[RMDB]
RNA sequence: GGGAACGACUCGAGUAGAGUCGAAAAACACCAAAACUGAAAACGGAAGGCAAUCCUUCCACGACGAUACUUACUUUCCUUUGAUCGUCGUUACAACUGGCAUAGCCACAAAGGAGAACAAACAUGAGCGCGGACACUGACUUCGGUCAGUGUCCAACUCCAGAUCUCUCUUCGGAGAGAUCUGGAGAAAAGAAACAACAACAACAAC
Reactivity to 2A3 in 0.01 (KOAc 150mM, MgCl2 10mM, bicine 150mM(pH8.5), 24C), signal-to-noise 1, nucleotides 027 to 156: a000c120a200c100c090a150a140a140a010c180u240g060a060a150a000a000c060g040g020a020a000g020g000c140a060a160u240c000c000u000u000c000c000a000c000g000a000c000g000a020u080a240c000u060u020a020c060u050u140u080c040c000u070u030u030g020a000u020c000g020u010c000g040u030u070a000c030a100a030c060u010g000g000c010a230u060a120g010c010c000a030c050a020a120a070g040g000a030g000a100a090c020a120a090a000c030a240u160g010a040g030c160g020c020g060g000a000c000a000c000u030g020a000c020u060u050c200g020g000u000c000a000g020u000g000u010c000c000a000a000